[RMDB]
Conditions: 150 mM KOAc, 10 mM MgCl2 and 150 mM bicine (pH 8.5), 24 C. An RNA of 177 nucleotides, treated with DMS and read out base by base.
RNA sequence: GGGAACGACUCGAGUAGAGUCGAAAAGGAGCUUGAUUCGUCAAGCUCCAAAAGUUACAGACCCGAUUCCUAGGGUAAACAAGAAGCUAUGCACCGAGGCAAAAAGGAAUGGAUUCGUCCAUUCCAACUGCUAGGAAGGGUUCGCCCUUCCUAGCAGAAAAGAAACAACAACAACAAC
Reactivity to DMS in 0.01 (KOAc 150mM, MgCl2 10mM, bicine 150mM(pH8.5), 24C), signal-to-noise 1, nucleotides 027 to 126: g050g000a020g020c000u000u000g010a000u000u010c240g040u000c000a000a000g030c000u000c000c000a020a010a060a090g010u010u000a090c170a190g010a020c000c010c000g000a200u000u000c000c000u000a210g000g000g010u000a020a050a030c060a030a140g000a110a060g000c080u020a030u000g010c130a140c100c070g010a050g010g020c060a030a020a060a070a050g030g010a020a000u000g000g000a010u000u010c280g000u000c000c000a010u000u000c000c000a060a050
Annotation:
For DMS, 755 sequencing reads were counted. Values cover nucleotides 27 to 126. It was measured as part of the RMDB library M2PK50. High DMS reactivity at an A or C suggests that its Watson-Crick edge is free.